The data come from the RNA Mapping Database (RMDB), library RNAMAK. This 207-nucleotide RNA was probed chemically with DMS and 2A3. 2A3 adducts were read by reverse transcription with SuperScript II with manganese. DMS adducts were read by reverse transcription with MarathonRT. For 2A3, 3,626 sequencing reads were counted. High DMS reactivity at an A or C suggests that its Watson-Crick edge is free.

RNA sequence: GGGAACGACUCGAGUAGAGUCGAAAAGAUGUACGUUCGCGUACAUCAAAAAACCUUUGUGACUAGCCCGUAUUGUCAGCGAUACCCCAUUGGGGAAUCGCUUGGAUUUAUACGUGCGCUAGUCACUCUGGUAAAAAUGGGGUAUUCGUACCCCAAACUCUUUAGUUCUAUUCGUAGAACUAAAGAGAAAAGAAACAACAACAACAAC
Reactivity to DMS in 0.01 (KOAc 150mM, MgCl2 10mM, bicine 150mM(pH8.5), 24C), signal-to-noise 2, nucleotides 027 to 156: g020a040u010g000u000a000c000g020u000u010c280g050c050g050u000a020c000a020u010c000a030a010a130a070a130a040c000c000u000u000u010g020u010g010a050c010u000a010g000c000c000c000g010u010a020u000u000g040u000c010a060g010c000g000a030u000a110c010c000c010c050a300u000u010g020g010g000g000a040a010u000c020g040c000u000u000g010g010a020u000u000u000a030u000a030c000g010u000g040c110g050c010u000a000g000u010c000a000c000u000c030u020g000g040u000a000a050a030a110a170u000g030g010g010g000u000a080u000u010c120g010u010a030c010c000c000c000a000a020a080
Reactivity to 2A3 in 0.01 (KOAc 150mM, MgCl2 10mM, bicine 150mM(pH8.5), 24C), signal-to-noise 4, nucleotides 027 to 156: g000a000u010g010u000a000c010g010u020u090c280g010c010g080u010a000c010a010u010c010a080a030a000a040a000a090c020c010u040u000u030g000u000g000a000c000u000a000g010c020c030c000g000u000a000u000u020g020u000c000a000g000c000g010a000u110a150c020c000c020c090a250u290u300g010g000g010g010a030a020u000c000g040c010u020u040g030g000a010u010u300u040a010u030a000c040g060u110g080c060g000c000u000a000g000u000c000a000c000u000c000u000g000g020u060a060a050a020a060a070u140g020g000g000g000u010a040u050u140c180g010u040a020c000c000c000c040a000a030a040